The record gives the reactivity of an RNA of 177 nucleotides to DMS. In probing experiments dimethyl sulfate is read out at A N1 and C N3, which are open when not base-paired. DMS adducts were read by reverse transcription with MarathonRT.

RNA sequence: GGGAACGACUCGAGUAGAGUCGAAAAGCCACAGCGUUGGGGGUCUUGUUGCGGCGUCCCAGCCAGGCGCCGAUCUCGCCCAGCUUGACCUGGCCGAAGGGCACAUCGGCUUUGCCGUAGAAGCGAGUCAAUUGACUCCUUUCGAGGAGUCAAUUGAAAAAGAAACAACAACAACAAC
Reactivity to DMS in 0.01 (KOAc 150mM, MgCl2 10mM, bicine 150mM(pH8.5), 24C), signal-to-noise 2, nucleotides 027 to 126: g010c010c020a050c050a090g030c140g020u010u010g000g000g000g000g000u000c060u000u000g020u000u000g030c030g000g030c000g020u000c000c020c020a110g000c040c070a300g000g010c030g000c000c010g000a050u000c050u000c070g020c050c050c020a090g000c030u000u000g000a050c080c030u000g000g030c010c020g000a150a100g010g010g010c040a080c120a100u000c040g020g020c010u010u010u010g020c030c020g000u010a110g000a100a090g020c080g000a090g020